An RNA of 207 nucleotides, treated with 2A3 and DMS and read out base by base. For DMS the reverse transcriptase was MarathonRT. Values are in units of 0.01, from 0 to 300, in steps of 10. Source: RMDB library OK3TST, as collected in RNAgym. For DMS, 4,330 sequencing reads were counted. Values cover nucleotides 27 to 156.
[RMDB]
RNA sequence: GGGAACGACUCGAGUAGAGUCGAAAACUGCCUGGUCUGGGACAUCGUCGACAACUCCGGGUGGGGUUCGGAGACAGCGUUCGGCGGGUCGCUGCUGACCGGUCUGGUCCGCGCGGUGAUGAACAUCGCGUCGGACGGCAUGACCGAGGGCAUCGACCAGGUGUAAAUUCUUCGGAAUUUACACCUGAAAAGAAACAACAACAACAAC
Reactivity to 2A3 in 0.01 (KOAc 150mM, MgCl2 10mM, bicine 150mM(pH8.5), 24C), signal-to-noise 2, nucleotides 027 to 156: c040u030g040c010c020u070g020g100u090c040u070g040g010g040a040c020a140u080c050g020u000c000g000a020c030a090a070c010u010c010c000g010g020g020u050g020g050g010g000u060u020c020g010g000a030g030a090c090a070g060c050g100u160u070c000g010g000c000g000g000g000u000c010g010c060u050g010c030u040g040a120c020c010g000g010u000c010u040g010g010u000c010c010g010c000g000c010g000g020u030g020a300u090g070a260a100c000a000u010c000g000c010g050u120c080g010g000a000c000g030g120c130a100u210g000a000c000c000g010a120g030g000g000c010a020u020c010g010a000c040
Reactivity to DMS in 0.01 (KOAc 150mM, MgCl2 10mM, bicine 150mM(pH8.5), 24C), signal-to-noise 1, nucleotides 027 to 156: c040u000g010c000c010u000g040g020u000c060u020g010g000g020a120c030a060u020c060g010u000c010g020a110c000a050a080c000u010c020c000g010g020g030u010g010g010g070g020u060u010c050g020g010a200g000a090c000a130g040c060g020u000u000c010g080g020c030g020g010g010u010c010g040c040u000g000c020u000g010a270c020c000g040g010u000c000u000g020g010u010c010c000g030c000g030c000g020g040u000g020a150u000g010a180a260c020a010u000c020g000c000g000u000c020g040g000a030c010g000g000c030a100u010g000a020c010c000g010a060g000g020g020c020a050u000c000g010a060c050